[RMDB]
RNA sequence: GGGAACGACUCGAGUAGAGUCGAAAAGGAAUAACACAGACCCUGCUGGGUGCUGUAAGGCUACAUAAGCUAGCCUGCCUAGAGUGACCAGAGCACACAGUAGGUGCUCACUAAAUGUGACUUGCUGGGCUUCUAGUCUGCAUGGCCAAAGGCCCUAGUAAUUACGUCCAUUCGUGGACGUAAUUACAAAAGAAACAACAACAACAAC
Reactivity to 2A3 in 0.01 (KOAc 150mM, MgCl2 10mM, bicine 150mM(pH8.5), 24C), signal-to-noise 3, nucleotides 027 to 156: g070g030a060a090u150a220a020c040a000c020a060g030a050c010c010c000u040g060c050u040g000g040g000u060g010c020u020g060u110a020a030g010g000c010u020a010c040a160u220a150a020g050c070u010a010g000c010c020u020g010c000c010u110a090g040a040g150u060g040a050c000c080a060g010a000g160c000a010c010a010c010a020g060u050a020g000g020u010g020c000u010c010a040c030u140a070a140a080u210g030u040g010a020c040u020u120g010c050u080g000g020g000c000u050u050c020u060a010g020u010c000u030g100c060a080u140g020g020c030c030a040a060a060g040g000c000c000c000u020a040
Reactivity to DMS in 0.01 (KOAc 150mM, MgCl2 10mM, bicine 150mM(pH8.5), 24C), signal-to-noise 1, nucleotides 027 to 156: g030g000a180a160u000a090a210c070a090c060a110g010a070c000c000c020u000g080c060u000g000g050g020u000g010c000u010g010u020a070a030g030g010c000u000a070c050a220u010a100a170g020c040u010a110g040c050c070u010g010c030c010u010a050g020a160g010u000g000a000c020c000a160g000a050g070c040a050c000a050c000a200g040u000a040g010g000u010g010c040u000c030a150c150u000a060a050a110u010g030u000g010a140c130u000u000g040c040u000g000g010g070c040u000u000c050u000a020g000u000c030u000g020c140a220u010g000g000c000c000a010a050a180g020g000c000c010c010u000a180
An RNA of 207 nucleotides, treated with 2A3 and DMS and read out base by base. For 2A3, 1,697 sequencing reads were counted. The DMS profile rests on 1,937 reads. The RNA was probed in 150 mM KOAc, 10 mM MgCl2 and 150 mM bicine (pH 8.5) at 24 C.